Source information: Conditions: 150 mM KOAc, 10 mM MgCl2 and 150 mM bicine (pH 8.5), 24 C. Chemical mapping of a 177-nucleotide RNA with 2A3 and DMS. For 2A3 the reverse transcriptase was SuperScript II with manganese. Reactivities are given for positions 27 through 126.

RNA sequence: GGGAACGACUCGAGUAGAGUCGAAAAUAUUAAAGCAGUUAAUCCACAAGGGAAAGUGGUUAAUACAGUUGGCUCUGGUGAUAGUACAGUUGCAGGCAUGGUGGCUGGAAUUGCUUCAGGUUUAACGUACCUUCCAAUUGUUCGCAAUUGGAAGGUAAAAAGAAACAACAACAACAAC
Reactivity to 2A3 in 0.01 (KOAc 150mM, MgCl2 10mM, bicine 150mM(pH8.5), 24C), signal-to-noise 5, nucleotides 027 to 126: u180a020u070u210a080a050a020g040c060a020g040u040u080a040a070u060c030c000a060c020a100a100g090g000g060a050a080a050g030u030g000g030u030u050a040a030u120a070c040a040g060u050u050g060g000c010u010c010u070g040g030u030g040a070u060a060g020u040a040c030a030g010u040u030g070c030a040g070g020c030a030u130g050g000u030g010g010c020u030g040g050a060a050u050u050g030c010u030u060c030a020g090g030u030u040u100a040a030c040g020
Reactivity to DMS in 0.01 (KOAc 150mM, MgCl2 10mM, bicine 150mM(pH8.5), 24C), signal-to-noise 5, nucleotides 027 to 126: u050a080u020u030a080a100a060g020c080a080g030u000u010a080a080u040c060c020a060c060a040a110g010g020g020a060a080a070g000u000g010g010u010u010a030a050u010a040c140a060g000u000u010g000g010c050u010c000u000g030g010u010g010a040u010a070g000u010a060c090a080g000u020u010g020c070a060g000g000c050a040u030g000g020u000g010g010c020u000g010g010a040a070u010u000g010c030u010u010c090a070g000g020u010u020u000a070a100c260g000